Description: The data come from the RNA Mapping Database (RMDB), libraries RFM100 and RFMREP. Chemical mapping of a 177-nucleotide RNA with 2A3 and DMS. 2A3 adducts were read by reverse transcription with SuperScript II with manganese.
RNA sequence: GGGAACGACUCGAGUAGAGUCGAAAAGGGGAUAUUGACGUGCUGGUGAGCUCCUUCAAGCUCGAGUGUGCGUCUUGCCACGGCCUUGAAGGAGUUCAGUGGUACAUCAAUGUCCAUGGCAUACUCAUGCCGAAAAGCAGUUCGCUGCUUUUCGGCAAAAAGAAACAACAACAACAAC
Reactivity to 2A3 in 0.01 (KOAc 150mM, MgCl2 10mM, bicine 150mM(pH8.5), 24C), signal-to-noise 1, nucleotides 027 to 126: g060g000g000g000a020u000a000u000u030g000a000c020g000u000g000c000u030g000g300u010g000a000g040c030u000c000c000u000u020c000a000a000g000c000u030c170g180a200g000u030g040u100g040c000g040u140c110u020u240g010c000c000a000c000g000g000c020c010u000u000g000a000a000g000g000a000g060u000u000c000a000g070u080g000g000u000a000c000a000u000c000a000a000u000g000u000c000c000a000u080g030g000c040a040u070a100c000u000c040a010
Reactivity to DMS in 0.01 (KOAc 150mM, MgCl2 10mM, bicine 150mM(pH8.5), 24C), signal-to-noise 1, nucleotides 027 to 126: g000g010g000g010a030u000a000u000u000g050a010c060g010u000g000c000u010g000g000u030g010a010g020c010u020c000c000u000u010c010a000a000g030c070u020c030g000a130g020u000g020u080g020c000g010u020c210u000u050g000c000c020a020c050g000g050c300c030u000u000g000a040a010g000g010a000g000u010u000c010a020g000u000g000g010u010a000c020a040u000c010a010a000u000g000u000c010c000a040u020g020g040c050a110u020a130c100u000c040a120